Source: RMDB library M2RFPK, as collected in RNAgym. This 207-nucleotide RNA was probed chemically with 2A3 and DMS. The DMS profile rests on 1,912 reads. Values cover nucleotides 27 to 156. The 2A3 profile rests on 1,575 reads.

RNA sequence: GGGAACGACUCGAGUAGAGUCGAAAAGGCAGGACUUACCAAGUCUGGGGGCCGAUGAGGGUUGGCUCAAAGUAGGGUUUUGACUUGAAAACUCAAGCUGUGACCCCAAUACGAUGGAGGUAAAUGAAAAAUCCAUCUGCCUUCGGGCAGAUGGAAAGUCAUCCAAAUAGUUCGCUAUUUGGAUGACAAAAGAAACAACAACAACAAC
Reactivity to 2A3 in 0.01 (KOAc 150mM, MgCl2 10mM, bicine 150mM(pH8.5), 24C), signal-to-noise 3, nucleotides 027 to 156: g030g010c030a010g000g020a010c020u040u050a120c080c040a100a000g050u030c070u090g000g000g030g050g020c030c050g020a020u090g060a100g040g030g040u020u040g000g000c010u040c080a070a060a010g030u080a070g010g000g070u020u070u080u060g050a070c020u020u060g060a030a030a100a130c090u060c020a030a000g030c020u040g060u120g060a030c000c040c000c030a020a010u070a070c050g040a030u060g040g020a040g050g020u070a050a060a090u160g140a040a060a020a000a020u000c010c000a010u000c000u000g010c010c000u020u050c130g040g000g010c000a000g010a000u000g000g010a010a000a000
Reactivity to DMS in 0.01 (KOAc 150mM, MgCl2 10mM, bicine 150mM(pH8.5), 24C), signal-to-noise 1, nucleotides 027 to 156: g010g020c000a150g050g000a060c010u000u000a120c070c020a090a180g030u020c010u010g020g000g020g040g020c100c040g010a060u010g020a110g010g030g000u010u000g000g000c070u000c060a000a080a120g020u000a040g030g000g000u000u010u000u010g010a030c100u000u000g000a040a150a100a140c190u010c010a030a080g000c030u000g050u000g010a190c010c020c000c050a020a140u020a040c070g010a160u000g000g040a050g000g040u000a050a050a070u030g000a050a110a050a100a140u000c000c000a000u000c000u000g020c000c000u010u010c300g020g030g030c000a020g010a030u000g000g010a010a010a070